[RMDB]
RNA sequence: GGGAACGACUCGAGUAGAGUCGAAAAAAGCCGAGUACUUGCGUUCUAAGGCGCUCGCUGCUAAACCACCGUCCAAUGAGGACCCCCUGUCCGCUCUGUGCGACAGGAUCACUUUUCAGCGCGAAGCAUCCGGAGUGAUUUUCGAAUCACUCCGGAUAAAAGAAACAACAACAACAAC
Reactivity to 2A3 in 0.01 (KOAc 150mM, MgCl2 10mM, bicine 150mM(pH8.5), 24C), signal-to-noise 2, nucleotides 027 to 126: a000a000g020c040c000g000a010g040u040a070c080u060u110g050c010g100u020u110c170u230a200a170g080g000c040g010c050u030c010g040c070u100g000c020u070a110a110a080c010c030a060c080c080g030u010c020c000a040a250u250g050a130g050g040a040c010c020c000c010c000u010g000u100c160c060g080c040u090c070u250g220u270g040c030g000a000c000a010g030g010a050u180c030a020c090u000u140u080u130c020a010g080c030g040c020g100a030a020g040c020
Reactivity to DMS in 0.01 (KOAc 150mM, MgCl2 10mM, bicine 150mM(pH8.5), 24C), signal-to-noise 2, nucleotides 027 to 126: a120a030g000c030c000g020a080g010u000a040c060u000u000g010c070g020u010u000c070u030a170a090g000g010c000g040c050u000c010g050c140u010g000c030u000a050a150a110c040c090a080c170c160g020u000c000c000a100a160u000g000a200g000g000a080c020c220c110c020c020u000g010u000c050c080g020c030u000c260u000g010u010g040c050g000a070c030a030g010g000a100u000c110a060c130u000u000u000u010c050a050g030c020g000c080g000a070a160g010c110
An RNA of 177 nucleotides, treated with 2A3 and DMS and read out base by base. The RNA was probed in 150 mM KOAc, 10 mM MgCl2 and 150 mM bicine (pH 8.5) at 24 C. The data come from the RNA Mapping Database (RMDB), library OK2TST. The 2A3 profile rests on 787 reads. For 2A3 the reverse transcriptase was SuperScript II with manganese.